[RMDB]
RNA sequence: GGGAACGACUCGAGUAGAGUCGAAAAGUGGAUAGUUUCGACUAUCCACACAACUGAUGAUCUUACAGUGGAGGAUGUAGAAGAUGGCCAUCGGAUCCUCAAAUAGCACAGAGUUCGCUCUGUGCAACAUGUAUGCAGGAUUCGUCCUGCAUACAUGAAAAGAAACAACAACAACAAC
Reactivity to DMS in 0.01 (KOAc 150mM, MgCl2 10mM, bicine 150mM(pH8.5), 24C), signal-to-noise 8, nucleotides 027 to 126: g010u000g010g000a010u000a000g000u000u000u010c190g010a030c000u000a000u010c000c000a010c010a040c160a090a080c030u000g000a070u000g000a080u010c020u000u000a080c080a050g000u010g010g000a050g000g010a070u000g010u000a070g020a080a080g010a060u000g010g010c070c030a050u000c020g000g000a060u000c010c010u000c140a070a070a080u010a090g010c000a000c000a010g010a020g020u000u010c230g010c000u000c000u000g010u000g010c010a030a060
Reactivity to 2A3 in 0.01 (KOAc 150mM, MgCl2 10mM, bicine 150mM(pH8.5), 24C), signal-to-noise 9, nucleotides 027 to 126: g000u010g000g000a000u000a000g010u020u060u120c180g020a020c000u000a000u000c000c000a000c000a000c000a000a010c010u060g020a050u040g010a020u060c020u040u130a060c040a080g040u110g120g070a050g060g020a050u060g050u160a060g020a190a020g040a110u130g080g030c040c010a020u020c020g030g030a020u010c000c010u040c030a050a080a100u140a020g000c000a000c000a000g010a000g010u060u070c170g070c070u000c000u010g000u000g000c000a000a000